RNA sequence: GGGAACGACUCGAGUAGAGUCGAAAAGGGGUCCUCUCCUUAAGCAUAAGCUUUUGACGAGCUGAAGCCUCCACGGCUCGAUAAGCUUAUGAACUACUUAAGAGGAGGACGGAGGCACCCAAAGUACGUUUAACCAGUUCGCUGGUUAAACGUACAACAUAUAAAAGAUGUUCGCAUCUUUUAUAUGAAAAGAAACAACAACAACAAC
Reactivity to DMS in 0.01 (KOAc 150mM, MgCl2 10mM, bicine 150mM(pH8.5), 24C), signal-to-noise 3, nucleotides 027 to 156: g000g020g020g030u000c010c010u000c000u010c010c000u000u000a000a020g000c010a050u000a030a050g010c000u000u000u000u000g010a300c090g000a030g020c000u000g000a100a100g010c000c010u000c000c010a300c030g010g020c000u000c010g000a100u000a050a020g000c020u000u000a110u020g020a070a240c030u010a150c010u000u000a020a050g000a030g010g000a010g000g020a020c010g010g010a020g040g020c000a110c030c000c030a100a120a160g010u000a010c010g010u000u000u000a000a020c000c000a010g010u000u010c300g000c010u000g000g000u010u000a000a010a010c000g020u000a010c000a050a230
Reactivity to 2A3 in 0.01 (KOAc 150mM, MgCl2 10mM, bicine 150mM(pH8.5), 24C), signal-to-noise 8, nucleotides 027 to 156: g070g010g030g010u010c000c000u010c020u020c000c010u000u000a000a000g030c000a010u010a010a000g000c030u130u200u300u300g210a130c070g000a000g000c000u020g010a110a020g010c000c000u010c010c000a020c010g010g010c000u010c010g060a070u060a300a050g000c000u010u000a010u010g000a020a030c070u300a010c000u170u010a010a000g010a020g000g020a020g000g000a000c010g000g000a000g000g000c010a050c000c000c010a040a040a010g000u000a000c000g000u000u000u000a000a000c000c000a000g020u070u100c190g060c170u000g000g000u000u000a000a000a000c000g000u000a000c000a000a000